[RMDB]
Chemical mapping of a 177-nucleotide RNA with 2A3 and DMS. The reactions ran in a buffer of 150 mM KOAc, 10 mM MgCl2 and 150 mM bicine (pH 8.5), at 24 C. For 2A3, 507 sequencing reads were counted. DMS adducts were read by reverse transcription with MarathonRT.
RNA sequence: GGGAACGACUCGAGUAGAGUCGAAAAGCACGUGAAAUUCUGUGGGAAUCUGUCAGAACCAUCUGAUAAGGCUAAAUACUCCUAGAAGACCGAUAGUGGACUAGUACCGUGAGGGAAAGGUGAAAAGUGAUACAGCAGCGUUCGCGCUGCUGUAUCAAAAAGAAACAACAACAACAAC
Reactivity to 2A3 in 0.01 (KOAc 150mM, MgCl2 10mM, bicine 150mM(pH8.5), 24C), signal-to-noise 1, nucleotides 027 to 126: g000c000a020c080g190u100g110a060a050a100u000u000c000u000g040u040g090g000g000a000a060u000c030u000g090u030c000a000g000a080a260c110c000a030u080c000u020g000a040u120a290a000g000g000c000u000a000a000a000u040a150c030u140c010c000u000a000g020a120a000g000a100c000c000g070a100u110a110g030u140g040g000a040c120u000a000g000u020a070c000c000g030u000g010a040g000g000g000a000a120a120g190g000u230g040a000a010a050a000g030
Reactivity to DMS in 0.01 (KOAc 150mM, MgCl2 10mM, bicine 150mM(pH8.5), 24C), signal-to-noise 2, nucleotides 027 to 126: g000c010a000c090g040u000g000a050a060a160u000u010c020u000g010u020g000g010g000a110a050u040c030u020g000u000c000a020g010a120a140c180c160a050u010c000u000g000a060u030a020a070g000g020c110u000a030a070a070u070a130c100u000c040c000u010a050g010a050a170g020a120c050c010g020a060u000a080g020u010g000g000a040c020u030a020g000u000a060c050c010g000u050g000a110g000g000g000a040a020a050g000g020u040g000a080a060a040a100g000